[RMDB]
RNA sequence: GGGAACGACUCGAGUAGAGUCGAAAACCAUUCCUUAUACCUUGAGUAUCGCUGAAUUCAGUUUAGCGUGCAUGCUCUUGGCUAUUCUCAUAGUGAUUGUCAAAUUUGGAGUUACUUAUUCGUCAAUAAAACACUACCACGUUCGCGUGGUAGUGAACUCCGUUAAACUGUUCGCAGUUUAACGGAGAAAAGAAACAACAACAACAAC
Reactivity to DMS in 0.01 (KOAc 150mM, MgCl2 10mM, bicine 150mM(pH8.5), 24C), signal-to-noise 1, nucleotides 027 to 156: c040c010a210u000u000c020c010u000u000a190u010a010c000c010u000u010g030a070g020u010a040u000c030g000c000u010g030a040a060u000u000c180a280g040u000u000u000a030g010c000g020u000g030c160a130u000g010c000u020c000u010u020g040g010c020u000a060u000u010c020u000c030a200u000a060g010u000g010a040u020u000g030u000c030a020a080a130u000u010u000g040g020a180g020u000u020a060c010u000u010a090u000u000c060g000u010c070a090a050u010a000a060a180a190c000a030c020u000a000c000c000a040c000g000u000u000c290g010c050g110u000g030g010u000a000g010u000g020a010a030
Reactivity to 2A3 in 0.01 (KOAc 150mM, MgCl2 10mM, bicine 150mM(pH8.5), 24C), signal-to-noise 3, nucleotides 027 to 156: c020c000a010u020u080c040c010u130u140a060u040a080c010c000u010u020g020a000g000u040a000u080c000g000c000u000g020a020a040u240u240c090a140g100u020u040u010a000g000c010g020u010g060c060a030u060g010c000u000c000u000u020g000g000c000u060a070u130u050c070u020c090a120u130a090g090u130g070a110u060u120g110u110c060a090a140a120u150u070u120g020g020a050g060u130u040a080c000u090u100a080u210u100c030g080u050c070a100a100u110a150a140a020a010c000a000c000u000a000c000c000a000c010g020u010u040c110g010c000g140u020g010g000u000a000g000u000g000a000a000